Record summary: The record gives the reactivity of an RNA of 177 nucleotides to 2A3 and DMS. Source: RMDB library M2PK50, as collected in RNAgym.

RNA sequence: GGGAACGACUCGAGUAGAGUCGAAAAGUCCCGGAGUUCGCUCCGGGACAAAGAACGUCAAAUUGACGCAAACUUCCGCGUCAUCGCGAGGAAACGAGGAAAAAAUCACGGAGUUCGCUCCGUGAAAGAUUUACACUUACUUCGGUAAGUGUAAAUCAAAAGAAACAACAACAACAAC
Reactivity to 2A3 in 0.01 (KOAc 150mM, MgCl2 10mM, bicine 150mM(pH8.5), 24C), signal-to-noise 4, nucleotides 027 to 126: g000u000c000c000c000g020g000a010g000u070u130c130g020c100u000c000c000g000g000g000a000c000a000a010a000g000a040a020c020g040u040c050a070a210a300u200u160g000a000c010g010c020a030a110a140c090u150u050c060c050g010c000g060u060c030a100u110c040g010c040g050a090g020g080a080a060a060c070g020a120g100g000a100a070a010a020a020a060u040c000a000c010g000g000a000g000u050u050c120g050c050u000c000c000g000u000g010a000a000a000
Reactivity to DMS in 0.01 (KOAc 150mM, MgCl2 10mM, bicine 150mM(pH8.5), 24C), signal-to-noise 4, nucleotides 027 to 126: g000u000c000c000c000g020g000a020g030u000u010c210g020c010u000c010c000g010g010g010a000c000a000a040a070g010a090a150c050g010u010c030a030a150a130u000u010g000a010c000g010c100a050a110a120c140u000u010c060c030g010c010g000u000c080a060u010c060g020c150g010a090g010g000a050a080a050c070g010a090g010g010a010a020a090a080a090a070u000c000a000c000g010g000a010g010u000u000c230g010c000u000c000c010g000u000g000a000a030a060